[RMDB]
RNA sequence: GGGAACGACUCGAGUAGAGUCGAAAAGCGGGGCUUGAAACGCGGGUAGCGCGCACGCCCGGCGAAGAAGUUCGCAUACGCGGUGUGCUGGUGCCGAAGUGUCUGCUGCAACAGCACGCUCGACACCUAGAACAUACCGUAUUCGUACGGUAUGUAACACACCCUGAUGUUUCGACAUCAGGGUGUGAAAAGAAACAACAACAACAAC
Reactivity to DMS in 0.01 (KOAc 150mM, MgCl2 10mM, bicine 150mM(pH8.5), 24C), signal-to-noise 1, nucleotides 027 to 156: g050c000g010g000g040g070c020u000u020g000a110a080a060c040g070c010g000g020g030u000a120g010c030g060c030g020c040a110c100g010c000c000c000g030g020c000g000a010a130g000a190a160g010u000u010c020g050c010a140u000a210c010g010c080g010g040u000g030u000g010c030u000g030g020u000g010c020c070g000a020a090g010u000g000u000c060u000g030c000u000g010c130a150a140c030a000g000c020a010c040g000c090u000c000g010a060c030a070c020c000u000a200g000a140a110c000a010u010a000c020c000g040u000a020u000u000c240g050u000a030c000g010g010u000a010u000g000u010a060a140
Reactivity to 2A3 in 0.01 (KOAc 150mM, MgCl2 10mM, bicine 150mM(pH8.5), 24C), signal-to-noise 3, nucleotides 027 to 156: g020c040g000g000g040g000c020u040u050g070a050a070a000c090g030c040g010g050g050u140a050g080c030g000c010g030c040a020c010g020c000c000c000g000g020c010g000a020a030g060a040a000g180u050u000c030g000c010a010u060a240c090g020c070g020g020u010g000u000g040c030u080g000g020u000g010c020c020g040a110a060g010u050g050u080c080u060g020c020u030g000c040a060a000c020a060g020c020a000c010g010c020u000c000g040a020c020a050c040c020u060a060g040a120a030c000a000u000a010c000c000g000u000a010u010u080c200g030u010a010c000g000g000u000a000u020g000u000a010a000